[RMDB]
The record gives the reactivity of an RNA of 177 nucleotides to DMS and 2A3. Values cover nucleotides 27 to 126. The DMS profile rests on 6,649 reads. For 2A3, 3,375 sequencing reads were counted.
RNA sequence: GGGAACGACUCGAGUAGAGUCGAAAAAAAACCGCUAGCUUGUCUAAAUCGUUAAACGAAACGCCUAAAUCUUCGUUAUUGGUUUCAAAAAGAGCGUUUAAAAGAUGGCUGCUGAUGUCUAAAUGUAGAACUAGUGUAAAUUCGUUUACACUAGUUCAAAAGAAACAACAACAACAAC
Reactivity to DMS in 0.01 (KOAc 150mM, MgCl2 10mM, bicine 150mM(pH8.5), 24C), signal-to-noise 5, nucleotides 027 to 126: a060a050a060a080c070c040g030c060u010a040g010c010u010u000g050u010c030u000a050a060a060u000c020g010u020u010a060a050a100c050g000a020a030a030c080g010c090c050u010a060a050a050u000c080u020u000c150g010u000u010a090u010u010g010g010u000u010u010c100a050a070a070a090a100g010a060g010c000g010u000u010u000a040a060a070a050g010a050u000g000g010c020u000g010c020u000g010a040u010g010u000c040u000a050a060a060u010g010u000a100
Reactivity to 2A3 in 0.01 (KOAc 150mM, MgCl2 10mM, bicine 150mM(pH8.5), 24C), signal-to-noise 3, nucleotides 027 to 126: a010a010a000a010c040c010g000c050u060a020g020c020u030u130g020u070c020u080a020a080a120u050c030g020u060u060a090a060a010c010g010a030a030a000c050g030c000c020u090a090a070a040u060c060u150u100c060g110u060u060a060u110u090g050g030u020u040u060c080a080a060a030a020a020g090a030g010c010g000u000u040u080a050a080a000a000g030a020u030g010g030c010u020g000c010u040g030a090u060g030u000c000u070a220a130a100u260g050u170a060